[RMDB]
RNA sequence: GGGAACGACUCGAGUAGAGUCGAAAAGUAGUGGAGAAGAAAGAAGUGGAAACACUUCGCGCACGCCCACUACAACGUGCGCAGUAUUGGAGUGUUUGAGGGAGAACCUCAAGCACUCCAGUACAAACGGUAUCAUCCUGUUCGCAGGAUGAUACCGAAAAGAAACAACAACAACAAC
Reactivity to DMS in 0.01 (KOAc 150mM, MgCl2 10mM, bicine 150mM(pH8.5), 24C), signal-to-noise 2, nucleotides 027 to 126: g000u020a050g040u030g010g010a120g060a190a110g000a120a070a130g010a010a000g010u000g010g010a180a090a190c040a000c000u000u000c030g020c010g010c040a000c060g000c020c000c030a090c030u000a010c030a110a100c050g000u000g000c040g070c040a230g000u020a000u010u000g000g000a030g000u000g030u000u000u000g010a010g000g000g000a220g020a100a160c000c000u000c000a000a000g010c000a010c000u020c000c000a000g020u000a000c000a080a050a130
Reactivity to 2A3 in 0.01 (KOAc 150mM, MgCl2 10mM, bicine 150mM(pH8.5), 24C), signal-to-noise 4, nucleotides 027 to 126: g040u050a000g030u090g140g230a150g040a160a060g070a050a180a020g010a000a000g000u000g020g000a000a040a040c000a000c000u000u010c010g000c000g020c000a000c000g030c010c020c010a040c000u020a030c010a050a000c020g010u010g010c010g000c040a010g000u000a000u000u010g000g000a010g000u000g000u000u000u000g000a000g000g040g010a170g070a240a250c000c000u000c000a000a000g000c010a000c000u000c000c000a000g000u000a000c000a000a030a000
Background:
Structure probing data (DMS and 2A3) for a 177-nucleotide construct. The DMS profile rests on 3,624 reads. For 2A3 the reverse transcriptase was SuperScript II with manganese. The data come from the RNA Mapping Database (RMDB), library OK1LIB.